This 170-nucleotide RNA was probed chemically with 2A3 and DMS. Reactivities are given for positions 27 through 129. The reactions ran in a buffer of 150 mM KOAc, 10 mM MgCl2 and 150 mM bicine (pH 8.5), at 24 C. 2A3 adducts were read by reverse transcription with SuperScript II with manganese.
RNA sequence: GGGAACGACUCGAGUAGAGUCGAAAACAGGACCUAUCAAGUUUGGAGUCAUCCGGGCCCUAAGGUAGAAUAGAACCCCGGGGGGUGAUCCACCAGGAGAUGAACGGAAAAAUCACCUCCAGAGGACAAACCGGAUUCUUCGGAAUCCGGAAAAGAAACAACAACAACAAC
Reactivity to 2A3 in 0.01 (KOAc 150mM, MgCl2 10mM, bicine 150mM(pH8.5), 24C), signal-to-noise 2, nucleotides 027 to 129: c020a030g030g070a000c000c000u050a050u210c030a050a090g000u110u130u050g010g010a020g020u080c050a040u030c020c000g070g030g030c000c000c000u080a070a000g050g030u030a050g020a210a090u100a100g060a020a080c000c000c000c000g000g000g000g000g000g010u000g000a010u000c010c000a000c000c000a060g090g080a140g120a150u120g090a050a000c060g000g070a000a160a000a000a000u010c000a000c000c000u000c020c010a070g090a080g050g040a030c060a040a050a000
Reactivity to DMS in 0.01 (KOAc 150mM, MgCl2 10mM, bicine 150mM(pH8.5), 24C), signal-to-noise 1, nucleotides 027 to 129: c170a160g050g010a030c000c030u060a000u040c100a000a040g040u000u000u000g000g000a050g000u000c060a040u000c040c040g000g000g030c000c000c050u000a010a060g000g010u020a080g000a030a000u000a290g010a180a190c000c000c000c090g170g000g030g010g000g000u000g000a080u000c000c040a180c000c000a050g010g000a060g060a190u120g000a250a110c160g000g030a000a070a010a070a060u110c020a000c130c000u030c000c040a100g060a160g060g000a100c090a040a040a100